The record gives the reactivity of an RNA of 177 nucleotides to 2A3 and DMS.
2A3 adducts were read by reverse transcription with SuperScript II with manganese.
The reactions ran in a buffer of 150 mM KOAc, 10 mM MgCl2 and 150 mM bicine (pH 8.5), at 24 C.
The data come from the RNA Mapping Database (RMDB), library OK2TST.
The DMS profile rests on 3,418 reads.
RNA sequence: GGGAACGACUCGAGUAGAGUCGAAAAAGACGUUACCAGCCUAAGAAACAAUUUCACAAUCAUUCCCCUGAUUUUGCCAUUAGAUGUUCCUUAGUGUUUAGAUCUGGUCUCAGGAUGAUAAUGUAGCCCACUGAUAUGACUUCGGUCAUAUCAGUGGAAAAGAAACAACAACAACAAC
Reactivity to 2A3 in 0.01 (KOAc 150mM, MgCl2 10mM, bicine 150mM(pH8.5), 24C), signal-to-noise 2, nucleotides 027 to 126: a030g070a030c050g010u060u030a050c020c000a020g030c000c020u020a070a010g050a070a110a060c060a030a120u090u160u170c070a020c040a090a130u040c010a050u150u150c000c010c000c000u030g060a090u020u020u060u020g000c010c020a000u000u070a060g080a120u080g030u040u010c000c010u010u010a050g020u060g070u180u100u100a010g020a040u030c000u040g030g030u070c000u030c010a040g020g050a030u080g020a020u040a150a010u110g060u080a020g010c000
Reactivity to DMS in 0.01 (KOAc 150mM, MgCl2 10mM, bicine 150mM(pH8.5), 24C), signal-to-noise 3, nucleotides 027 to 126: a080g000a060c070g020u000u010a050c050c020a090g000c020c010u010a030a040g000a050a070a060c060a040a070u010u010u000c060a060c090a040a020u000c040a090u000u010c020c020c010c130u000g000a050u000u000u000u000g010c100c100a060u000u010a060g010a130u000g010u000u000c020c020u010u000a050g010u010g010u000u000u000a080g000a090u000c040u000g000g000u010c040u000c060a070g010g000a050u000g010a040u010a060a050u000g010u000a120g010c180